[RMDB]
RNA sequence: GGGAACGACUCGAGUAGAGUCGAAAACAUGUGCGUCAAUUAUUCGACCAUAUCAUAUUGUUGAAUAAACAUCUUAUUUGUUCCGGACCGGUUGAAGAGUGUUUGACGAAUAAAAACAUUUUUCAAGCAGAGAUAUAGACUUCGGUCUAUAUCUCUGAAAAGAAACAACAACAACAAC
Reactivity to 2A3 in 0.01 (KOAc 150mM, MgCl2 10mM, bicine 150mM(pH8.5), 24C), signal-to-noise 2, nucleotides 027 to 126: c020a070u110g060u100g050c010g060u000c020a060a090u090u050a060u020u050c010g020a020c050c100a000u040a090u230c090a070u120a020u260u000g010u000u000g010a010a010u030a030a070a030c010a040u040c010u080u190a190u100u130u110g040u010u010c050c040g040g050a110c070c070g050g030u030u020g000a010a020g010a010g040u010g000u030u010u010g020a030c090g130a100a030u170a120a080a010a000a010c010a020u020u030u000u000u000c000a020a060g030
Reactivity to DMS in 0.01 (KOAc 150mM, MgCl2 10mM, bicine 150mM(pH8.5), 24C), signal-to-noise 3, nucleotides 027 to 126: c170a040u000g020u000g010c150g010u000c040a130a210u010u000a040u000u000c030g020a030c000c090a050u010a120u010c180a140u010a090u000u010g010u010u010g000a050a010u000a020a030a050c050a040u010c110u000u010a090u000u010u000g000u000u000c030c000g000g010a100c120c110g020g000u000u000g010a010a030g010a010g030u000g010u000u000u000g010a150c140g010a110a170u020a020a070a020a030a010c000a020u000u000u000u000u000c000a030a090g030
The record gives the reactivity of an RNA of 177 nucleotides to 2A3 and DMS. The 2A3 profile rests on 1,090 reads.